[RMDB]
RNA sequence: GGGAACGACUCGAGUAGAGUCGAAAAGUGUGCUGGCUUGUCGGCUGCUCAUCAGGGGCCAGCUCCACCACCGCCUCGACCGGCGACAUCGCCAAGGUGGCCGAAGUGAAGUCGGGCUUUGGACCUGGAAAGGUCGAUUUUUCGAAAUCGACCUUUCAAAAGAAACAACAACAACAAC
Reactivity to DMS in 0.01 (KOAc 150mM, MgCl2 10mM, bicine 150mM(pH8.5), 24C), signal-to-noise 3, nucleotides 027 to 126: g030u010g030u010g000c040u000g000g020c020u000u000g020u000c070g010g030c010u000g000c110u020c110a100u000c120a100g000g000g000g020c000c010a070g010c030u010c050c040a090c030c040a100c080c080g010c020c020u010c060g000a070c060c050g000g010c010g020a110c180a090u010c030g000c050c070a130a170g000g020u000g000g040c030c010g000a080a100g010u020g010a080a120g030u000c050g000g000g010c030u000u010u000g010g000a190c020c020u000g010
Reactivity to 2A3 in 0.01 (KOAc 150mM, MgCl2 10mM, bicine 150mM(pH8.5), 24C), signal-to-noise 1, nucleotides 027 to 126: g170u150g000u040g040c010u020g000g030c020u100u080g060u100c040g040g050c030u020g030c020u020c080a160u030c040a100g000g000g000g070c000c010a010g000c000u020c000c000a010c000c010a020c020c030g000c030c000u070c040g020a040c040c000g040g000c000g060a080c040a080u150c060g060c090c040a060a090g040g000u020g050g040c010c010g020a050a000g100u090g180a050a010g020u030c000g000g010g000c000u010u010u040g030g000a030c010c010u030g070